[RMDB]
RNA sequence: GGGAACGACUCGAGUAGAGUCGAAAAUUACACAAGCUACAGAAACACAUAUUCAUGCUGAUUUUGCUUCAGGAAUUCGUGAUGUGGCUAAACGCUUAAAUGCAAAUAUAUAUGUGUCUGGCGAAGGCCAUUACGCGUCAUUCGUGACGCGUAAUGGAAAAGAAACAACAACAACAAC
Reactivity to DMS in 0.01 (KOAc 150mM, MgCl2 10mM, bicine 150mM(pH8.5), 24C), signal-to-noise 4, nucleotides 027 to 126: u020u060a090c170a100c140a130a040g000c000u000a030c030a020g010a110a100a070c010a080c070a070u030a030u000u000c050a090u010g060c040u010g010a060u030u060u020u010g000c060u000u020c030a040g000g010a060a030u000u000c140g010u000g010a120u000g010u000g000g000c000u010a010a080a060c080g050c030u000u000a030a080a040u030g010c050a070a060a120u060a060u010a040u020a030u010g010u000g000u000c110u030g010g010c030g020a130a080g010g030
Reactivity to 2A3 in 0.01 (KOAc 150mM, MgCl2 10mM, bicine 150mM(pH8.5), 24C), signal-to-noise 9, nucleotides 027 to 126: u140u170a040c070a000c010a100a040g020c020u130a050c030a030g100a120a270a010c010a010c010a030u060a040u080u070c060a060u180g040c010u040g180a260u030u070u100u190g060c050u020u030c010a060g050g130a190a160u130u080c070g060u090g070a090u070g040u030g020g000c010u070a040a110a020c050g020c030u120u190a040a150a060u210g020c030a010a080a010u170a010u030a010u000a030u080g020u000g030u020c030u010g030g000c040g050a090a080g080g020

About this RNA
This 177-nucleotide RNA was probed chemically with DMS and 2A3. Source: RMDB library OK1LIB, as collected in RNAgym. Reactivities are given for positions 27 through 126. 2A3 adducts were read by reverse transcription with SuperScript II with manganese. The RNA was probed in 150 mM KOAc, 10 mM MgCl2 and 150 mM bicine (pH 8.5) at 24 C. DMS adducts were read by reverse transcription with MarathonRT.